Source information
The data come from the RNA Mapping Database (RMDB), libraries RFM100 and RFMREP. This 177-nucleotide RNA was probed chemically with DMS and 2A3.

RNA sequence: GGGAACGACUCGAGUAGAGUCGAAAAUAUGCCAGCAUAAUAUCGAAUCACGGCACAAUAGCGCUCGUCUGCGUUCUGUCAGGGCCUGUUUUGGUAAUGCCUUUCUUUCUGUUAUGCGCUACGCUGACACAAGGUAGUACUUCGGUACUACCUUGUGAAAAGAAACAACAACAACAAC
Reactivity to DMS in 0.01 (KOAc 150mM, MgCl2 10mM, bicine 150mM(pH8.5), 24C), signal-to-noise 5, nucleotides 027 to 126: u020a090u030g010c030c040a180g000c040a060u000a060a090u010a050u020c070g010a070a050u010c050a060c210g010g000c020a040c090a090a070u010a050g010c050g000c010u000c190g020u010c120u010g010c050g000u010u010c040u010g000u000c040a110g010g000g000c020c000u000g000u000u000u000u000g010g010u020a070a060u010g010c040c060u000u010u000c030u000u000u000c040u000g010u000u010a050u010g010c030g010c070u020a040c160g030c030u010g000a230
Reactivity to 2A3 in 0.01 (KOAc 150mM, MgCl2 10mM, bicine 150mM(pH8.5), 24C), signal-to-noise 9, nucleotides 027 to 126: u240a050u070g040c020c010a010g010c030a050u070a140a060u060a160u120c060g030a050a020u090c030a030c110g010g000c010a010c010a060a120u070a060g040c030g010c020u040c060g170u050c140u090g020c030g040u130u040c020u060g080u060c040a070g060g000g020c000c000u020g040u030u040u050u040g060g010u070a050a050u080g020c000c010u030u130u040c030u020u080u010c030u040g070u060u050a050u150g010c030g020c040u070a040c070g020c040u020g020a000

The reactions ran in a buffer of 150 mM KOAc, 10 mM MgCl2 and 150 mM bicine (pH 8.5), at 24 C. For DMS the reverse transcriptase was MarathonRT.